[RMDB]
RNA sequence: GGGAACGACUCGAGUAGAGUCGAAAAGGAUCACGAGGGGGAGACCCCGGCAACCUGGGACGGACACCCAAGGUGCUCACACCGGAGACGGUGGAUCCGGCCCGAGAGGGCAACGAAGGUCCGAGCACAGCACUAGUCGUUUCGACGACUAGUGCUGAAAAGAAACAACAACAACAAC
Reactivity to DMS in 0.01 (KOAc 150mM, MgCl2 10mM, bicine 150mM(pH8.5), 24C), signal-to-noise 2, nucleotides 027 to 126: g000g000a030u000c000a250c130g020a130g040g000g020g020g000a190g010a260c000c000c010c030g000g000c030a040a020c040c010u010g000g010g010a130c080g030g000a080c040a230c000c030c000a020a070g010g010u000g000c050u000c020a300c000a050c010c010g000g000a220g000a260c030g030g030u000g000g000a040u000c000c000g000g000c000c000c000g000a180g000a210g010g010g030c010a050a020c170g000a100a050g010g010u000c020c070g010a300g000c130a150
An RNA of 177 nucleotides, treated with DMS and read out base by base.
The reactions ran in a buffer of 150 mM KOAc, 10 mM MgCl2 and 150 mM bicine (pH 8.5), at 24 C.